[RMDB]
RNA sequence: GGGAACGACUCGAGUAGAGUCGAAAAACAAAAUAUAGGGUUAGUCUAUCCAUUUCUAUAAAUCAGUGUACAUGUCAUGAAUUUAAUGGCAAACUACAAACUUAUUUAUGAAAAUUAACGGCUAAUCAAACGCAUAGAUUUUCGAAUCUAUGCGUUUAAAAGAAACAACAACAACAAC
Reactivity to DMS in 0.01 (KOAc 150mM, MgCl2 10mM, bicine 150mM(pH8.5), 24C), signal-to-noise 5, nucleotides 027 to 126: a090c040a080a070a100a090u030a130u030a140g000g020g000u000u000a000g010u010c000u010a270u000c250c170a110u000u000u000c010u020a010u000a000a010a000u000c060a040g010u000g010u000a010c150a300u020g020u000c000a000u000g010a100a170u020u010u030a100a020u000g010g000c020a010a060a120c300u010a000c020a030a050a100c010u000u000a010u000u000u000a000u000g000a010a010a010a030u000u030a060a070c250g000g000c000u000a000a000u000c010
Reactivity to 2A3 in 0.01 (KOAc 150mM, MgCl2 10mM, bicine 150mM(pH8.5), 24C), signal-to-noise 8, nucleotides 027 to 126: a000c050a020a080a070a000u300a050u140a130g080g010g000u000u010a010g000u000c020u020a100u070c040c020a020u000u010u010c100u120a020u000a020a010a000u000c010a020g010u010g000u010a030c040a060u020g010u020c000a000u010g170a230a190u270u230u260a150a000u030g000g010c000a040a070a010c030u000a010c010a020a110a000c000u010u000a000u000u020u000a010u010g030a020a020a030a030u070u050a050a020c050g000g010c000u000a000a000u000c000
The record gives the reactivity of an RNA of 177 nucleotides to DMS and 2A3. It was measured as part of the RMDB libraries RFM100 and RFMREP.